This 177-nucleotide RNA was probed chemically with 2A3 and DMS. For DMS the reverse transcriptase was MarathonRT. The RNA was probed in 150 mM KOAc, 10 mM MgCl2 and 150 mM bicine (pH 8.5) at 24 C.
RNA sequence: GGGAACGACUCGAGUAGAGUCGAAAAGAAAGGGAACGAUUCGAGUAGAGUCGAAAAGACGCUCAACUCAUGGAGCGCAAGACGAAUAGCUACAUAUUCGAAAUGAGGGCGCCGUUCAAGAAGGAGAGCUAGUAUGGACUUUCGAGUCCAUACUAGCAAAAGAAACAACAACAACAAC
Reactivity to 2A3 in 0.01 (KOAc 150mM, MgCl2 10mM, bicine 150mM(pH8.5), 24C), signal-to-noise 3, nucleotides 027 to 126: g120a050a070a010g120g020g000a070a020c020g020a060u140u020c000g000a050g020u160a060g040a000g040u000c010g040a030a010a000a000g000a000c030g000c020u020c030a040a040c060u020c120a050u120g070g010a010g000c000g010c000a010a010g040a000c000g010a010a000u030a010g090c100u180a150c070a090u020a040u000u040c020g060a020a030a110u070g000a060g050g050g040c010g000c000c070g000u040u070c060a070a020g060a020a020g060g040a120g010a000
Reactivity to DMS in 0.01 (KOAc 150mM, MgCl2 10mM, bicine 150mM(pH8.5), 24C), signal-to-noise 2, nucleotides 027 to 126: g000a080a050a140g000g000g000a090a190c000g020a000u000u000c040g010a080g000u020a130g000a010g020u040c000g010a060a050a130a080g000a150c040g020c000u000c000a090a130c170u000c080a050u000g010g040a040g050c000g000c010a050a080g000a160c050g000a080a030u070a030g000c140u010a170c170a030u000a010u000u000c000g000a030a060a120u000g030a070g000g020g000c060g010c050c000g070u000u000c150a030a100g000a040a090g000g000a160g000a100